[RMDB]
RNA sequence: GGGAACGACUCGAGUAGAGUCGAAAAGAUAUGGAACGACCACCGAGUCGUACUCGGAAACGAGUAUACGACGAUGAGGUGGCGUUCCUAAGUCAAAAGAUGAUGAAGGCUUCGGCCUUCAUCAUCAGACAUUCUUGACGUUCGCGUCAAGAAUGUCAAAAGAAACAACAACAACAAC
Reactivity to 2A3 in 0.01 (KOAc 150mM, MgCl2 10mM, bicine 150mM(pH8.5), 24C), signal-to-noise 2, nucleotides 027 to 126: g010a000u000a020u060g000g000a000a000c020g300a300c010c010a000c000c030g100a070g020u000c010g010u020a020c000u000c000g000g000a000a000a010c000g000a010g000u100a220u030a140c010g000a000c010g070a230u300g100a040g000g000u000g000g010c000g000u020u000c000c000u010a010a010g000u010c000a000a070a160a160g010a000u000g010a010u000g000a000a010g000g000c050u130u200c300g050g010c010c010u000u000c000a000u010c000a010u000c010a000
Reactivity to DMS in 0.01 (KOAc 150mM, MgCl2 10mM, bicine 150mM(pH8.5), 24C), signal-to-noise 2, nucleotides 027 to 126: g020a010u000a040u010g000g000a000a020c000g000a280c000c010a000c000c010g010a050g030u000c000g000u000a000c000u000c020g030g000a010a010a040c000g040a010g000u010a180u020a030c060g040a000c000g000a180u010g010a300g000g030u000g010g000c010g000u010u010c000c010u000a000a060g000u000c000a180a130a160a080g000a020u000g000a010u000g010a010a010g000g000c000u000u020c300g010g020c000c000u010u000c000a000u000c000a000u000c000a040

About this RNA: An RNA of 177 nucleotides, treated with 2A3 and DMS and read out base by base. DMS (dimethyl sulfate) methylates the pairing face of unpaired adenines and cytosines. For 2A3, 4,410 sequencing reads were counted. The RNA was probed in 150 mM KOAc, 10 mM MgCl2 and 150 mM bicine (pH 8.5) at 24 C. Values cover nucleotides 27 to 126.